[RMDB]
RNA sequence: GGGAACGACUCGAGUAGAGUCGAAAAUAGACAAACAGUAGCAUUGGGGUAUGCCCCUUACAGCGCUAGGUUCAAUAACCGACAAAGAAAAUAACGAAGUGUUGGUAGAACCAAAUUUGAUCAUUAACCAACAAGCAAGUGUUAACUUUGCUUUUGCCAUAAUUAUAGGCUUCGGCCUAUAAUUAUGAAAAGAAACAACAACAACAAC
Reactivity to 2A3 in 0.01 (KOAc 150mM, MgCl2 10mM, bicine 150mM(pH8.5), 24C), signal-to-noise 5, nucleotides 027 to 156: u100a000g020a010c010a010a090a010c030a050g060u080a020g020c030a060u030u120g010g000g010g020u150a090u240g130c000c000c000c030u010u060a060c040a040g030c000g020c070u060a060g010g010u000u030c000a100a100u110a160a070c010c010g010a010c020a010a100a020g120a100a140a030a050u190a100a030c080g050a110a060g050u020g000u030u010g000g010u010a020g000a020a020c000c000a010a030a110u060u040u080g010a020u030c010a010u040u050a030a060c020c020a020a070c030a070a000g010c010a020a000g010u010g070u280u150a100a090c020u070u060u140g010c000u050u030u060u110g030c030
Reactivity to DMS in 0.01 (KOAc 150mM, MgCl2 10mM, bicine 150mM(pH8.5), 24C), signal-to-noise 3, nucleotides 027 to 156: u010a140g010a180c070a130a080a120c090a080g010u000a060g030c020a160u000u000g010g010g030g050u020a090u000g020c060c030c000c030u000u020a070c020a130g030c110g030c060u000a090g010g000u020u020c000a110a160u000a100a100c070c000g030a100c020a040a090a120g030a050a090a070a130u000a060a180c070g020a140a120g020u000g010u010u000g020g020u000a130g000a040a110c050c000a040a050a190u000u000u010g010a110u000c060a060u000u000a080a090c020c010a010a030c040a040a100g000c060a030a110g000u000g020u000u010a060a140c050u000u000u000g020c000u000u000u000u000g020c170